Description
Structure probing data (2A3 and DMS) for a 177-nucleotide construct. Values are in units of 0.01, from 0 to 300, in steps of 10. Conditions: 150 mM KOAc, 10 mM MgCl2 and 150 mM bicine (pH 8.5), 24 C. 2A3 adducts were read by reverse transcription with SuperScript II with manganese. For DMS, 1,734 sequencing reads were counted. For 2A3, 806 sequencing reads were counted. As a SHAPE reagent, 2A3 marks flexible, mostly unpaired nucleotides at the ribose 2'-OH.
[RMDB]
RNA sequence: GGGAACGACUCGAGUAGAGUCGAAAACUAUGGUCAUGGAUUGCUUUAAAGACCAACUCCUUGGACUUAUAUGCCCAGACAUAUGAGAUGAUAAACAAUUCUGUUAGAGUGAACUUUGGAAGACAUCGAGUCCUCUCUUUUUCGAAAGAGAGGACUCAAAAGAAACAACAACAACAAC
Reactivity to 2A3 in 0.01 (KOAc 150mM, MgCl2 10mM, bicine 150mM(pH8.5), 24C), signal-to-noise 3, nucleotides 027 to 126: c000u010a070u090g030g050u060c050a020u050g040g010a060u090u080g080c080u140u060u290a150a150a040g040a140c050c000a000a040c080u040c040c020u010u070g050g030a020c000u190u000a020u020a010u040g000c040c090c030a080g060a070c020a010u070a040u090g010a050g000a010u180g030a040u180a140a100a020c030a040a100u150u000c010u120g130u250u150a020g010a030g210u100g070a040a050c020u120u030u040g030g040a030a050g080a080c020a070u090c110
Reactivity to DMS in 0.01 (KOAc 150mM, MgCl2 10mM, bicine 150mM(pH8.5), 24C), signal-to-noise 2, nucleotides 027 to 126: c050u010a000u010g000g000u000c050a100u000g000g000a140u000u000g000c080u030u000u020a010a110a130g000a140c100c000a020a090c110u020c020c030u030u000g000g000a120c000u000u010a020u010a040u000g000c030c020c060a100g000a170c020a070u000a010u020g000a010g000a100u000g000a100u000a120a060a050c110a050a030u000u000c000u000g010u000u000a040g000a230g000u010g000a020a100c060u000u000u000g000g040a120a010g010a100c210a050u000c170